[RMDB]
RNA sequence: GGGAACGACUCGAGUAGAGUCGAAAAAUCACGAGAUGACAGUCGAACUAGACACCGGCGCAGGUAAUUGUUCGUAUCGCCUGCACAGUGUGUCUAAUGCGUGACACUGUAUUGUCGCGGAUACAGAGUUACUACUUUAUUUCGAUAAAGUAGUAACAAAAGAAACAACAACAACAAC
Reactivity to 2A3 in 0.01 (KOAc 150mM, MgCl2 10mM, bicine 150mM(pH8.5), 24C), signal-to-noise 9, nucleotides 027 to 126: a000u070c050a050c040g050a050g020a070u100g070a040c020a020g030u050c010g040a060a030c020u000a010g000a000c000a000c010c010g080g000c120g000c030a000g010g020u070a140a120u140u160g140u300u200c110g040u140a100u100c050g000c000c000u000g070c020a010c020a040g140u170g000u010g010u140c010u000a010a020u130g040c040g040u050g010a010c010a010c040u020g020u030a050u020u080g090u020c020g000c050g050g010a010u040a070c040a010g100a000
Reactivity to DMS in 0.01 (KOAc 150mM, MgCl2 10mM, bicine 150mM(pH8.5), 24C), signal-to-noise 9, nucleotides 027 to 126: a050u010c020a140c030g000a070g010a030u010g010a040c080a050g000u000c020g020a150a070c060u010a010g000a010c010a000c010c010g010g010c100g010c010a000g000g010u000a100a060u000u030g010u060u050c240g020u020a040u010c090g000c000c000u000g020c000a030c020a080g000u050g020u000g010u000c000u000a020a020u040g010c120g020u010g010a300c300a060c000u000g010u010a040u010u010g020u000c030g020c060g000g010a030u000a050c090a050g000a230